[RMDB]
RNA sequence: GGGAACGACUCGAGUAGAGUCGAAAACGCGGACUUCAUCAUCUGGGGAAUCACGAAGACUCGGCAGCAUCUCCAGGUUGCCACCGACCUGGGUGGGAGUCUUCCGAUCUGUGUCCCAGCGUGUCCAGUGUGAGUCUAAUUUCGAUUAGACUCACACAAAAGAAACAACAACAACAAC
Reactivity to 2A3 in 0.01 (KOAc 150mM, MgCl2 10mM, bicine 150mM(pH8.5), 24C), signal-to-noise 7, nucleotides 027 to 126: c060g010c060g020g020a030c040u170u060c100a190u040c020a060u040c090u050g020g000g000g050a070a110u130c020a020c100g040a080a010g000a010c040u000c010g080g060c070a030g040c010a110u020c060u030c040c000a000g010g010u000u020g070c080c030a080c050c040g010a000c000c000u010g010g010g030u110g030g070g010a080g000u020c000u000u000c000c000g020a040u020c020u060g060u020g040u060c000c000c000a000g000c010g050u060g020u020c000c040a040
Reactivity to DMS in 0.01 (KOAc 150mM, MgCl2 10mM, bicine 150mM(pH8.5), 24C), signal-to-noise 4, nucleotides 027 to 126: c100g010c090g000g000a040c030u020u010c160a130u050c110a100u010c020u000g000g000g000g000a130a060u020c070a110c160g000a040a010g000a010c040u000c000g010g020c160a160g010c050a110u030c030u020c020c010a020g000g000u000u010g000c100c050a070c120c030g000a000c000c000u020g000g020g010u010g010g010g000a030g000u000c000u010u000c010c050g000a040u030c140u040g000u030g010u000c010c000c020a040g010c180g030u010g010u000c020c020a150